Annotation
An RNA of 177 nucleotides, treated with DMS and read out base by base. It was measured as part of the RMDB library TTRINS. The RNA was probed in 150 mM KOAc, 10 mM MgCl2 and 150 mM bicine (pH 8.5) at 24 C.
[RMDB]
RNA sequence: GGGAACGACUCGAGUAGAGUCGAAAAGAUAUGGAAAGGACCCAAGUCACUGUCCCGUUGAAAUUCCUUGUCUCUCGGAAACGAGAGACAAGGAAUGGAGGGACAGAAGUCUUGCCUUUCCUAAGUCCUUAGUGAGGAGGUUCGCCUCCUCACUAAGAAAAGAAACAACAACAACAAC
Reactivity to DMS in 0.01 (KOAc 150mM, MgCl2 10mM, bicine 150mM(pH8.5), 24C), signal-to-noise 1, nucleotides 027 to 126: g000a080u000a300u010g010g010a000a040a020g030g000a300c210c300c040a010a010g030u000c050a300c010u010g010u000c000c000c000g080u000u000g010a220a130a040u000u000c000c010u000u010g010u000c000u010c000u000c000g010g000a110a110a230c000g010a000g010a020g010a010c010a000a000g000g000a000a000u000g000g000a160g000g020g000a010c010a000g000a010a080g030u000c000u000u000g000c000c000u000u000u000c010c000u010a030a080g000u000c080